[RMDB]
RNA sequence: GGGAACGACUCGAGUAGAGUCGAAAACGUACUAUGCGCAUAGGUACUGGCCCGCGGCCCGCUCAUGUAGUACCGUGGCCAUACGAUCGGCCAGCAUGAUCAGGCCGUGAGGCGCCGAUCGGCCGUAGUCAUCAUGUCCCUUCGGGGACAUGAUGACAAAAGAAACAACAACAACAAC
Reactivity to 2A3 in 0.01 (KOAc 150mM, MgCl2 10mM, bicine 150mM(pH8.5), 24C), signal-to-noise 2, nucleotides 027 to 126: c020g000u050a030c050u040a040u090g100c060g030c090a120u030a200g040g000u090a140c100u060g100g000c030c000c000g010c000g000g000c000c000c000g000c020u000c000a010u000g040u050a080g140u120a180c070c050g080u040g010g000c010c020a070u190a230c140g090a200u210c080g000g040c000c030a020g010c010a000u000g000a020u020c020a010g000g030c000c030g010u000g000a070g010g000c020g000c020c000g060a120u130c050g020g000c020c010g000u000a010
Reactivity to DMS in 0.01 (KOAc 150mM, MgCl2 10mM, bicine 150mM(pH8.5), 24C), signal-to-noise 2, nucleotides 027 to 126: c190g000u010a040c030u000a120u010g010c100g000c050a100u000a160g010g020u010a040c100u000g000g000c010c000c000g040c000g010g030c020c010c030g010c160u000c000a010u000g020u000a120g020u020a060c220c240g010u010g000g010c020c040a200u010a100c300g030a100u000c110g020g000c000c010a180g040c000a030u010g000a030u000c010a060g000g020c030c000g010u000g000a100g040g020c120g000c010c020g000a060u010c120g020g000c000c010g000u000a050

Structure probing data (2A3 and DMS) for a 177-nucleotide construct.
The DMS profile rests on 1,260 reads.
The RNA was probed in 150 mM KOAc, 10 mM MgCl2 and 150 mM bicine (pH 8.5) at 24 C.
Values are in units of 0.01, from 0 to 300, in steps of 10.